[RMDB]
Chemical mapping of a 207-nucleotide RNA with 2A3 and DMS. The 2A3 profile rests on 1,119 reads. 2A3 adducts were read by reverse transcription with SuperScript II with manganese. The RNA was probed in 150 mM KOAc, 10 mM MgCl2 and 150 mM bicine (pH 8.5) at 24 C. The data come from the RNA Mapping Database (RMDB), library M2RFPK.

RNA sequence: GGGAACGACUCGAGUAGAGUCGAAAAUUCCAUUUGAGUAUUCUGAAAACGGGCUUUUCAGCAUGGAACGUACAUAUUAAAUAGUAGGAGUGCAUAGUGGCCCGUAUAGCAGGCAUUAACAUUCCUGAAAACGUGAAAAGGUUCGCCUUUUCACGAAGAGUACCUACUACUUCGGUAGUAGGUACUCAAAAGAAACAACAACAACAAC
Reactivity to 2A3 in 0.01 (KOAc 150mM, MgCl2 10mM, bicine 150mM(pH8.5), 24C), signal-to-noise 2, nucleotides 027 to 156: u070u000c010c010a040u080u050u130g080a060g040u080a120u250u000c060u070g080a000a000a060a030c030g000g000g050c000u240u150u260u230c080a020g010c010a030u060g010g090a120a060c030g080u040a030c080a100u130a100u130u260a210a210a270u110a090g060u030a010g000g060a160g000u000g050c050a020u070a130g060u060g050g000c020c000c010g000u000a020u010a000g000c000a010g030g020c010a010u010u070a030a010c010a050u100u070c000c010u020g100a090a120a020a010c000g000u000g010a000a000a000a000g000g010u020u040c130g050c050c000u000u000u010u000c000a000c010g000a010a000
Reactivity to DMS in 0.01 (KOAc 150mM, MgCl2 10mM, bicine 150mM(pH8.5), 24C), signal-to-noise 1, nucleotides 027 to 156: u000u000c010c020a090u010u000u020g040a170g010u000a050u000u000c000u000g010a060a110a050a010c020g000g000g090c120u000u000u000u000c030a150g000c030a050u000g010g010a100a080c020g010u000a150c090a160u000a120u000u000a130a120a140u000a060g010u000a140g000g000a170g030u000g000c030a110u000a110g010u000g000g030c060c010c010g030u000a010u000a160g020c040a040g010g030c040a050u000u000a140a030c030a080u010u000c000c010u010g000a070a040a080a200c040g040u000g000a040a000a020a010g010g010u000u010c300g050c010c010u000u000u000u000c010a000c010g000a010a030